[RMDB]
RNA sequence: GGGAACGACUCGAGUAGAGUCGAAAAAUUCAUCUACGUAUACUUUUCUUUCUGCUAAGACUAUGUUUGAUACUUUUGAAGGUAAUACGGAAGGAUGUUAUUUGUAUUCUCGUCAUUCAUCACCUUCCUGAGUACCAGGAUUCGUCCUGGUACUCAGAAAAGAAACAACAACAACAAC
Reactivity to DMS in 0.01 (KOAc 150mM, MgCl2 10mM, bicine 150mM(pH8.5), 24C), signal-to-noise 3, nucleotides 027 to 126: a050u000u000c010a000u020c020u010a130c020g020u000a000u010a050c040u000u010u010u000c030u000u010u010c060u010g000c110u010a220a080g010a050c080u010a130u010g000u000u000u010g010a130u000a050c050u000u000u000u010g000a050a000g000g010u010a040a060u000a000c000g000g000a130a090g000g000a020u000g000u000u000a060u000u000u000g010u000a170u000u000c010u000c010g030u000c180a080u020u000c140a080u000c100a080c070c050u000u000c040
Reactivity to 2A3 in 0.01 (KOAc 150mM, MgCl2 10mM, bicine 150mM(pH8.5), 24C), signal-to-noise 2, nucleotides 027 to 126: a000u060u000c000a000u010c000u030a050c000g020u030a010u000a000c030u130u230u120u040c040u000u130u060c080u080g080c050u070a120a020g000a110c060u080a050u300g130u100u190u160g120a110u220a110c000u110u130u090u050g000a010a000g000g000u050a120a100u000a040c020g020g010a020a060g080g000a010u020g090u090u040a070u020u020u040g110u030a110u040u000c020u000c040g010u000c050a100u150u060c050a080u140c000a060c100c040u040u100c000